[RMDB]
RNA sequence: GGGAACGACUCGAGUAGAGUCGAAAACGGCCCACCUUCCAGGGGGCACUUUCCUACUUCGUUGGCCCCUGGGCCCCUGAGCCUAUCGACGGCGAUCCCGGCUUUGCCCUCGGACCGGACUGCGGGAGCUAUGUAUGUCAUUCGUGACAUACAUAGCAAAAGAAACAACAACAACAAC
Reactivity to 2A3 in 0.01 (KOAc 150mM, MgCl2 10mM, bicine 150mM(pH8.5), 24C), signal-to-noise 2, nucleotides 027 to 126: c020g100g000c010c000c000a080c020c050u130u060c030c050a020g000g010g000g040g050c020a040c040u100u120u060c010c030u040a140c060u110u180c080g150u090u060g090g060c000c000c000c000u010g000g010g000c000c000c000c000u060g040a030g010c000c010u090a110u150c050g080a070c040g030g010c010g020a030u040c010c020c010g010g020c020u100u090u140g050c000c010c010u030c030g060g030a090c050c030g040g030a070c050u080g010c050g010g040g000a060
Reactivity to DMS in 0.01 (KOAc 150mM, MgCl2 10mM, bicine 150mM(pH8.5), 24C), signal-to-noise 9, nucleotides 027 to 126: c220g010g010c020c010c020a130c170c110u000u010c060c060a070g010g010g010g010g020c020a020c090u000u000u000c060c050u000a100c150u000u000c100g020u000u000g010g000c000c000c010c020u000g010g000g000c020c020c030c020u000g000a110g000c030c020u000a200u010c070g000a130c130g010g010c030g010a090u000c040c020c030g000g010c070u000u000u010g010c030c010c020u000c070g010g000a070c050c030g010g000a080c040u000g010c050g010g000g010a150